This 177-nucleotide RNA was probed chemically with 2A3 and DMS. The RNA was probed in 150 mM KOAc, 10 mM MgCl2 and 150 mM bicine (pH 8.5) at 24 C. For DMS the reverse transcriptase was MarathonRT. Reactivities are given for positions 27 through 126. As a SHAPE reagent, 2A3 marks flexible, mostly unpaired nucleotides at the ribose 2'-OH. For 2A3, 3,968 sequencing reads were counted.
RNA sequence: GGGAACGACUCGAGUAGAGUCGAAAAGUAGCAGCAGACAUGCGCAUGAUUACAUGUGAUGUAAUCCCUUGAGUUAUAAGAACGUCCUAAGGGAACAGUGGAGCGUGAUUGAGCUCGAGAAACAAGGAGAUGCUUCCUUAUUCGUAAGGAAGCAUCUAAAAGAAACAACAACAACAAC
Reactivity to 2A3 in 0.01 (KOAc 150mM, MgCl2 10mM, bicine 150mM(pH8.5), 24C), signal-to-noise 2, nucleotides 027 to 126: g030u060a000g010c050a000g000c000a000g040a030c020a020u000g070c040g000c020a010u060g010a080u040u060a040c000a040u080g020u030g010a010u020g070u020a030a050u040c030c000c000u000u030g040a010g010u000u030a120u040a170a060g070a020a000c000g000u000c020c000u010a050a050g110g010g000a060a010c040a010g040u070g020g010a030g040c000g010u060g010a100u000u040g020a000g000c000u000c000g030a040g000a010a060a000c050a010a000g000g010
Reactivity to DMS in 0.01 (KOAc 150mM, MgCl2 10mM, bicine 150mM(pH8.5), 24C), signal-to-noise 5, nucleotides 027 to 126: g000u010a040g010c060a060g050c060a040g000a080c160a040u000g010c040g000c040a030u010g020a130u020u010a040c010a020u010g020u030g010a100u000g000u000a040a030u000c010c140c030u010u020g000a050g000u000u010a060u000a020a040g010a150a040c020g030u010c030c030u010a130a120g000g000g050a070a120c030a040g000u030g000g000a040g010c000g030u000g020a140u000u000g000a060g000c020u000c000g000a050g010a070a090a000c140a120a000g010g000